Annotation
Chemical mapping of a 177-nucleotide RNA with DMS and 2A3. The data come from the RNA Mapping Database (RMDB), libraries RFM100 and RFMREP.

[RMDB]
RNA sequence: GGGAACGACUCGAGUAGAGUCGAAAAAGCGUACUCUACGGAGUACGCAAUCCGAUGAUGAUGGAUCAACCGGCUGAGUGGUGAUGAAGUCCGCAUCACCUGAGGACUCCAGGUUACGACCUGGAGAUUGAGUGUAAAAGUUCGCUUUUACACUCAAAAAAGAAACAACAACAACAAC
Reactivity to DMS in 0.01 (KOAc 150mM, MgCl2 10mM, bicine 150mM(pH8.5), 24C), signal-to-noise 9, nucleotides 027 to 126: a070g010c000g010u000a000c000u000c000u000a170c180g020g000a020g010u000a000c000g010c010a010a010u010c010c010g010a100u030g010a070u000g000a090u010g000g000a080u010c050a100a100c100c040g000g000c060u000g000a140g020u010g010g020u000g000a030u000g000a110a100g010u010c060c070g000c010a010u010c010a010c010c010u010g000a140g010g010a220c000u000c000c000a000g000g000u000u010a110c170g010a050c000c000u000g000g000a000g010a040
Reactivity to 2A3 in 0.01 (KOAc 150mM, MgCl2 10mM, bicine 150mM(pH8.5), 24C), signal-to-noise 9, nucleotides 027 to 126: a000g000c000g000u000a000c000u000c000u010a070c300g100g000a000g000u000a000c000g000c000a000a010u020c000c020g020a030u100g010a020u030g020a030u130g050g040a040u050c020a030a090c040c020g080g000c080u080g070a090g110u140g040g010u010g010a030u020g010a090a040g100u030c020c010g020c010a010u010c010a010c000c010u050g050a080g040g080a030c000u000c000c000a000g000g020u030u050a080c200g040a010c010c000u000g000g000a010g000a010